The record gives the reactivity of an RNA of 177 nucleotides to DMS and 2A3. The data come from the RNA Mapping Database (RMDB), library OK1LIB. The DMS profile rests on 7,707 reads. Conditions: 150 mM KOAc, 10 mM MgCl2 and 150 mM bicine (pH 8.5), 24 C.
RNA sequence: GGGAACGACUCGAGUAGAGUCGAAAAGCCUUUCGGGGUACACGAGCGGCGAACGGGUGAGUAACACGUGGGUGAUCUGCCCCGCACUCUGGGAUAAGCUUGGGAAACUGGGACUGAUACCGGAUAGAAUUUUAUUAUGAUUCGUCAUAAUAAAAUUAAAAGAAACAACAACAACAAC
Reactivity to DMS in 0.01 (KOAc 150mM, MgCl2 10mM, bicine 150mM(pH8.5), 24C), signal-to-noise 2, nucleotides 027 to 126: g020c000c000u000u010u020c040g020g000g010g000u000a060c090a080c070g000a080g010c060g000g000c050g010a100a100c070g000g020g010u010g010a110g010u030a080a080c100a110c050g010u050g000g010g020u010g000a120u030c300u090g000c000c000c000c000g000c300a150c140u000c080u000g000g000g000a300u000a300a300g000c030u000u020g010g000g000a050a070a090c070u010g010g000g010a050c040u000g000a090u010a030c020c000g000g010a060u010a050g010
Reactivity to 2A3 in 0.01 (KOAc 150mM, MgCl2 10mM, bicine 150mM(pH8.5), 24C), signal-to-noise 3, nucleotides 027 to 126: g010c010c000u040u030u030c040g040g000g010g020u050a030c040a010c040g050a040g020c040g040g010c020g020a040a010c020g010g000g010u020g010a080g050u130a100a000c010a000c100g030u080g030g020g010u030g030a140u050c090u270g020c000c000c000c010g000c000a030c020u000c040u100g110g000g000a110u110a290a060g030c010u030u060g000g010g010a010a030a030c030u010g000g000g030a010c010u020g000a010u020a090c000c000g010g020a010u020a030g070